Background:
An RNA of 207 nucleotides, treated with DMS and 2A3 and read out base by base. For DMS, 8,026 sequencing reads were counted. Conditions: 150 mM KOAc, 10 mM MgCl2 and 150 mM bicine (pH 8.5), 24 C. 2A3 adducts were read by reverse transcription with SuperScript II with manganese.

[RMDB]
RNA sequence: GGGAACGACUCGAGUAGAGUCGAAAAGAUCUGCGCCGAUCCGAAACGCUAGCAAACAGCCCGCAUCAUGUCGUCUCCUAACUUCGACGUGGCGAAAUACUGAGCUUAUGCGAGUAAGCCUGUUAGCAAUAGAUCAGAACGUUCGCGUUCUGAUCAACCUAAGAGGAAGAUUCGUCUUCCUCUUAGGAAAAGAAACAACAACAACAAC
Reactivity to DMS in 0.01 (KOAc 150mM, MgCl2 10mM, bicine 150mM(pH8.5), 24C), signal-to-noise 3, nucleotides 027 to 156: g010a060u000c010u000g020c020g020c010c000g010a100u010c020c030g020a080a100a070c080g020c040u000a040g040c040a060a050a120c080a270g010c020c010c030g020c040a080u000c060a080u000g010u000c000g030u000c040u000c070c050u000a080a080c090u000u000c010g010a050c030g010u000g010g010c040g000a080a090a120u010a130c070u000g010a130g000c010u000u000a070u010g010c190g000a160g020u010a050a120g020c020c010u000g020u000u000a040g020c040a080a140u000a060g000a030u000c000a000g000a010a010c010g030u010u010c300g030c010g020u000u010c010u010g010a000u000c000a020a060
Reactivity to 2A3 in 0.01 (KOAc 150mM, MgCl2 10mM, bicine 150mM(pH8.5), 24C), signal-to-noise 8, nucleotides 027 to 156: g030a040u030c030u070g030c060g020c050c020g020a040u040c030c040g040a060a040a030c060g000c040u040a010g020c030a070a050a090c030a040g030c010c010c000g010c030a130u120c010a020u110g020u020c010g010u010c040u090c090c060u120a150a150c060u090u060c010g010a020c010g020u020g020g010c000g040a070a030a010u150a050c050u050g020a010g010c000u040u030a010u070g050c020g010a040g080u030a010a010g020c010c020u030g010u060u050a010g010c040a080a140u050a170g000a000u000c000a000g000a000a000c000g010u060u050c180g010c000g100u000u000c020u000g000a000u000c000a000a000

The data come from the RNA Mapping Database (RMDB), library M2RFPK.